Source: RMDB library OK3TST, as collected in RNAgym. The record gives the reactivity of an RNA of 207 nucleotides to 2A3. The reactions ran in a buffer of 150 mM KOAc, 10 mM MgCl2 and 150 mM bicine (pH 8.5), at 24 C. For 2A3, 1,070 sequencing reads were counted.
RNA sequence: GGGAACGACUCGAGUAGAGUCGAAAAGUCAUGCCUUCGGGCAUGACAGGUACCGAGAGGUACCAAAUAGCGUACAGGAGACUCAGACUGUACGCUAAAAAAGUGUGUGUUCAAUAAGCCCCAAUUGAACACACACUAAAAUGGGGCAAGAGUGUUAGAUUAUGGUGGGGUUCGCCCCACCAUAAUCAAAAGAAACAACAACAACAAC
Reactivity to 2A3 in 0.01 (KOAc 150mM, MgCl2 10mM, bicine 150mM(pH8.5), 24C), signal-to-noise 1, nucleotides 027 to 156: g010u000c000a000u000g020c000c020u010u050c170g030g000g000c020a010u010g000a000c030a000g010g000u000a000c050c030g030a030g000a010g010g000u000a000c000c000a020a020a020u030a000g000c000g000u000a000c000a010g060g030a070g100a150c040u030c150a010g030a070c000u010g000u000a000c010g000c010u010a030a040a010a010a010a050g010u010g010u000g000u000g000u000u010c030a040a020u080a160a110g020c000c000c000c000a010a050u020u000g000a000a000c000a000c000a000c000a010c000u010a000a020a010a020u070g000g000g040g010c060a060a030g090a010g070u090g020u080u110a050